RNA sequence: GGGAACGACUCGAGUAGAGUCGAAAACAAAUGCAUGCUCAGGCUGUUGCAAUUCAAGCAGCCGCCCAAACGGUACCUCAAAACAUAAGGCAUGCAAAUGAGACUGGGGUAGCUGGACAUUUUACUUCAGAAAGGUACAUACCCGUGGGCCAUCCUGAUAUAGUCAGCAUUUCGAUGCUGACUAUAUAAAAGAAACAACAACAACAAC
Reactivity to DMS in 0.01 (KOAc 150mM, MgCl2 10mM, bicine 150mM(pH8.5), 24C), signal-to-noise 3, nucleotides 027 to 156: c050a050a080a170u000g020c010a020u000g010c000u000c110a170g020g020c010u000g030u000u010g010c030a170a210u010u000c120a060a100g000c020a060g010c020c020g010c020c000c040a050a090a110c040g020g010u000a040c020c030u010c010a060a060a140a160c130a090u000a050a100g020g020c010a030u000g010c000a020a090a130u000g000a110g000a090c080u000g000g010g010g040u000a040g000c070u000g000g010a130c090a080u000u000u000u000a070c050u000u010c040a070g010a070a080a080g010g050u010a020c050a160u000a080c020c020c010g010u010g040g030g020c020c030a120u000c010c010u010g000
Reactivity to 2A3 in 0.01 (KOAc 150mM, MgCl2 10mM, bicine 150mM(pH8.5), 24C), signal-to-noise 5, nucleotides 027 to 156: c040a000a070a000u070g000c000a000u020g000c010u060c170a000g000g000c000u020g010u040u020g040c070a200a230u150u220c090a190a020g000c000a000g000c000c000g010c000c000c010a070a080a010c060g050g000u040a040c010c020u120c080a090a110a030a130c030a070u160a140a010g020g020c000a000u000g000c000a000a040a010u090g010a030g020a030c050u050g020g000g000g000u020a030g030c070u050g040g030a030c010a070u060u100u050u080a060c090u030u060c010a020g080a060a110a020g040g000u030a030c010a020u080a030c020c010c010g040u060g000g030g000c010c020a040u040c030c020u070g050